[RMDB]
RNA sequence: GGGAACGACUCGAGUAGAGUCGAAAAAACUUGAACACCGUGCUGGCCACCACCGUCAAGCAUCAAACGGAAUUCGACCGCACGGUCGACAAGCUAGAGGUGCUGAUCACUGGACUGAAGAACAGGGAUCCGUAGGUGAUUUCGAUCACCUACGGAUAAAAGAAACAACAACAACAAC
Reactivity to DMS in 0.01 (KOAc 150mM, MgCl2 10mM, bicine 150mM(pH8.5), 24C), signal-to-noise 4, nucleotides 027 to 126: a040a030c030u000u010g010a040a200c300a060c050c020g000u000g000c030u100g050g000c020c030a130c300c170a090c040c010g010u030c070a110a040g010c100a090u050c130a050a150a050c040g050g010a070a060u000u000c120g010a110c020c020g000c170a030c060g010g000u000c010g000a180c180a050a020g000c050u000a070g000a100g020g030u000g010c000u010g000a050u030c040a050c030u010g000g000a080c080u020g020a090a080g000a100a050c040a050g010g020g030
Reactivity to 2A3 in 0.01 (KOAc 150mM, MgCl2 10mM, bicine 150mM(pH8.5), 24C), signal-to-noise 4, nucleotides 027 to 126: a000a010c020u020u020g020a000a000c010a000c010c000g000u000g000c070u260g020g000c050c020a080c000c000a020c090c020g020u040c110a100a130g150c030a060u130c070a110a060a020c020g020g060a070a030u140u130c110g030a030c020c010g010c050a060c080g000g000u000c000g020a020c010a020a020g010c010u090a020g000a020g110g020u060g010c020u050g050a030u040c030a040c090u040g000g100a030c070u140g030a030a040g030a120a070c030a110g010g020g030